[RMDB]
RNA sequence: GGGAACGACUCGAGUAGAGUCGAAAAGAUAUGGAGCUACAGCAACAGCCUGCGGUCGGAAACGACCGUCAGGACAUGCUGGUCUCCUAAGUCAAAACCCAUUUAAUUGUUCGCAAUUAAAUGGGAACAGUAAAGUGACGUUCGCGUCACUUUACUGAAAAGAAACAACAACAACAAC
Reactivity to 2A3 in 0.01 (KOAc 150mM, MgCl2 10mM, bicine 150mM(pH8.5), 24C), signal-to-noise 2, nucleotides 027 to 126: g030a010u050a030u100g000g000a020g040c070u300a300c060a020g010c010a020a170c060a300g110c020c000u020g000c000g000g000u000c010g010g040a030a020a020c010g010a010c000c020g020u040c020a000g000g030a040c010a030u020g000c000u010g010g040u020c010u000c020c000u020a050a020g010u030c010a040a030a120a280c000c000c000a000u030u020u000a000a000u000u030g030u060u120c300g000c220a000a000u010u010a010a000a000u010g000g000g010a040a020
Reactivity to DMS in 0.01 (KOAc 150mM, MgCl2 10mM, bicine 150mM(pH8.5), 24C), signal-to-noise 2, nucleotides 027 to 126: g000a040u020a250u000g000g010a000g010c190u000a160c000a010g010c000a050a160c170a150g000c010c010u000g010c000g020g030u010c000g000g000a080a060a140c000g000a000c000c000g020u010c020a000g020g000a030c140a080u000g000c000u010g000g000u000c010u000c000c000u010a010a080g010u010c020a080a040a170a170c000c000c000a000u010u000u000a000a000u000u000g010u010u010c160g000c010a010a010u000u000a000a010a020u000g000g010g000a020a020
An RNA of 177 nucleotides, treated with 2A3 and DMS and read out base by base. DMS adducts were read by reverse transcription with MarathonRT. High DMS reactivity at an A or C suggests that its Watson-Crick edge is free. Reactivities are rounded to 0.1 and cut off at 0 and 3. For DMS, 1,958 sequencing reads were counted. The reactions ran in a buffer of 150 mM KOAc, 10 mM MgCl2 and 150 mM bicine (pH 8.5), at 24 C. Source: RMDB library TTRDEL, as collected in RNAgym. For 2A3 the reverse transcriptase was SuperScript II with manganese.